[RMDB]
RNA sequence: GGGAACGACUCGAGUAGAGUCGAAAAUAACAUCGAUCGAAACCAGAGUGAUGGCCCCGACGCCUGCACUGCUGCCCUCGAUAGCCUUUUUGGAACAACCCAGGGGACAGUAUCUAGUGGCGAUGCCCACCGCGUUAGAUUUCGAUCUAACGCGGUGAAAAGAAACAACAACAACAAC
Reactivity to 2A3 in 0.01 (KOAc 150mM, MgCl2 10mM, bicine 150mM(pH8.5), 24C), signal-to-noise 1, nucleotides 027 to 126: u120a030a020c030a040u020c010g020a000u020c040g090a160a030a040c050c010a010g000a000g080u030g030a080u050g030g020c020c000c000c040g020a030c010g020c010c020u040g000c020a030c090u070g010c020u020g000c000c000c000u010c030g020a100u020a080g030c020c000u060u130u050u140u180g100g000a130a020c030a070a020c050c030c060a080g010g010g000g020a000c020a000g000u000a010u080c060u040a030g060u050g060g000c020g020a030u070g040c000c000
Reactivity to DMS in 0.01 (KOAc 150mM, MgCl2 10mM, bicine 150mM(pH8.5), 24C), signal-to-noise 2, nucleotides 027 to 126: u010a150a110c120a060u000c000g000a090u030c020g000a140a100a100c120c050a210g020a060g030u000g000a190u010g000g010c010c020c040c060g020a090c090g000c010c000u000g030c100a060c030u000g000c000u030g000c020c000c000u000c020g000a130u010a060g010c010c020u000u000u000u000u000g000g030a150a070c090a100a120c060c030c040a180g000g020g000g010a060c020a040g000u000a040u010c060u000a070g000u010g010g020c060g010a130u000g000c090c060
The record gives the reactivity of an RNA of 177 nucleotides to 2A3 and DMS. The RNA was probed in 150 mM KOAc, 10 mM MgCl2 and 150 mM bicine (pH 8.5) at 24 C. For 2A3, 1,337 sequencing reads were counted. For 2A3 the reverse transcriptase was SuperScript II with manganese. For DMS the reverse transcriptase was MarathonRT.